[RMDB]
RNA sequence: GGGAACGACUCGAGUAGAGUCGAAAAGGCUGACGGGAGGCGCGCCCAAUCGCUACCGCUUUAAGGUAAAAGAGGACGAUCCAAAAGGACUGUUUUUACUGAUGGGGGCGAAAAUGCACUGGACAAGCUGCAUUUGCAUAUUCGUAUGCAAAUGCAGAAAAGAAACAACAACAACAAC
Reactivity to DMS in 0.01 (KOAc 150mM, MgCl2 10mM, bicine 150mM(pH8.5), 24C), signal-to-noise 4, nucleotides 027 to 126: g010g010c020u030g000a070c090g010g000g000a080g010g020c070g020c230g010c040c020c030a070a160u000c040g040c060u000a110c020c030g010c210u000u010u000a070a140g000g010u000a020a020a040a000g010a070g000g020a070c030g000a120u020c140c150a040a090a090a150g000g020a070c020u000g000u010u000u010u010u010a040c030u010g000a070u010g000g000g000g010g000c010g000a010a020a060a050u000g010c070a060c040u010g000g020a060c120a080a090g010
Reactivity to 2A3 in 0.01 (KOAc 150mM, MgCl2 10mM, bicine 150mM(pH8.5), 24C), signal-to-noise 2, nucleotides 027 to 126: g030g000c020u030g010a010c030g010g040g030a040g030g000c000g000c010g010c060c010c000a000a100u050c040g020c030u120a270c050c020g100c130u130u200u150a150a020g050g000u030a050a010a020a020g090a040g050g000a040c060g010a060u050c070c070a040a160a040a070g000g000a000c000u020g270u040u060u040u000u050a000c010u000g040a120u170g000g060g000g000g000c020g000a010a000a000a020u120g010c040a020c110u060g030g040a050c040a080a020g010

Chemical mapping of a 177-nucleotide RNA with DMS and 2A3. Values cover nucleotides 27 to 126.